Source: RMDB library RNAMAK, as collected in RNAgym. The record gives the reactivity of an RNA of 207 nucleotides to 2A3 and DMS. For DMS, 3,057 sequencing reads were counted. High 2A3 reactivity points to a flexible backbone, as in loops and unpaired stretches.

[RMDB]
RNA sequence: GGGAACGACUCGAGUAGAGUCGAAAACUACCAUUCGUGGUAGACAACACCUUUGUGAUAUUCCUUGGGACAUGAUUGUCGGAUGACCCAUUGGGUCAUCUCCCAAUCAACAGCCCAAGGAGAUAUCACUCUGGUCAUCCGUGCACUUCGGUGCAAAGUGCACACGAAUAUUCGUAUUCGUGUGCACAAAAGAAACAACAACAACAAC
Reactivity to 2A3 in 0.01 (KOAc 150mM, MgCl2 10mM, bicine 150mM(pH8.5), 24C), signal-to-noise 7, nucleotides 027 to 156: c000u000a000c000c000a020u040u100c290g140u080g010g010u030a020g030a120c110a090a060c020a020c000c000u000u000u010g000u000g000a000u000a000u000u010c000c000u000u010g000g000g030a060c040a180u050g010a010u030u010g030u070c060g010g000a000u000g000a000c000c020c190a300u130u300g010g000g000u000c000a000u010c010u040c000c010c000a000a000u000c000a010a090c050a120g010c000c020c000a000a000g000g010a000g000a000u000a000u000c000a010c000u000c000u000g000g020u020c020a080u010c040c030g090u060g020c010a010c020u070u090c300g110g000u010g000c000a000a100a040
Reactivity to DMS in 0.01 (KOAc 150mM, MgCl2 10mM, bicine 150mM(pH8.5), 24C), signal-to-noise 1, nucleotides 027 to 156: c020u000a060c000c030a090u000u010c260g040u000g020g000u000a010g010a110c070a120a150c080a050c020c000u000u000u010g030u000g020a040u000a010u010u000c000c000u000u000g010g000g000a110c120a300u000g010a050u000u000g020u000c030g000g000a030u000g000a010c000c000c010a300u000u000g030g050g000u000c010a000u000c000u000c010c010c000a000a010u010c020a010a100c070a070g010c030c040c000a000a040g010g000a040g020a000u010a000u000c010a010c000u000c030u000g010g010u010c080a130u000c050c000g000u000g010c000a010c000u000u020c260g040g010u000g040c030a040a030a070